Conditions: 150 mM KOAc, 10 mM MgCl2 and 150 mM bicine (pH 8.5), 24 C.
Structure probing data (DMS and 2A3) for a 177-nucleotide construct.
For 2A3 the reverse transcriptase was SuperScript II with manganese.
The 2A3 profile rests on 5,498 reads.
Source: RMDB library OK2TST, as collected in RNAgym.
[RMDB]
RNA sequence: GGGAACGACUCGAGUAGAGUCGAAAAGCACCUAUUAAUUUCUCCUAAGCGUCCCUUUACUGCGAUUCUGGGUGGUUCUAAAGUAUCUUCAAAAAUCGGCGUCAUAGAAGCCCUACUCUCUCAAGUGCUAUUCAUAACUGUUCGCAGUUAUGAAUAGAAAAGAAACAACAACAACAAC
Reactivity to DMS in 0.01 (KOAc 150mM, MgCl2 10mM, bicine 150mM(pH8.5), 24C), signal-to-noise 6, nucleotides 027 to 126: g010c100a060c040c020u000a110u010u010a100a120u010u010u010c030u000c030c040u000a110a140g010c060g020u000c020c010c030u000u000u000a110c080u010g010c060g010a100u000u000c040u000g010g020g020u000g010g010u000u000c050u000a060a090a120g010u000a030u000c030u000u010c070a050a060a060a100a070u010c050g010g010c050g010u010c070a090u010a100g000a110a110g000c030c010c010u000a060c040u000c020u000c030u000c050a060a100g010u000g010
Reactivity to 2A3 in 0.01 (KOAc 150mM, MgCl2 10mM, bicine 150mM(pH8.5), 24C), signal-to-noise 4, nucleotides 027 to 126: g010c020a050c040c010u050a140u190u150a260a190u050u140u030c050u020c000c020u040a110a020g040c010g060u020c030c010c000u040u090u100a090c040u040g020c000g070a060u080u000c010u030g010g060g010u030g000g050u050u050c050u100a070a050a020g030u030a110u020c030u120u030c070a050a100a060a050a170u060c030g030g010c010g040u010c020a010u030a170g090a120a020g040c000c000c000u020a020c010u020c000u000c010u000c050a090a040g080u030g090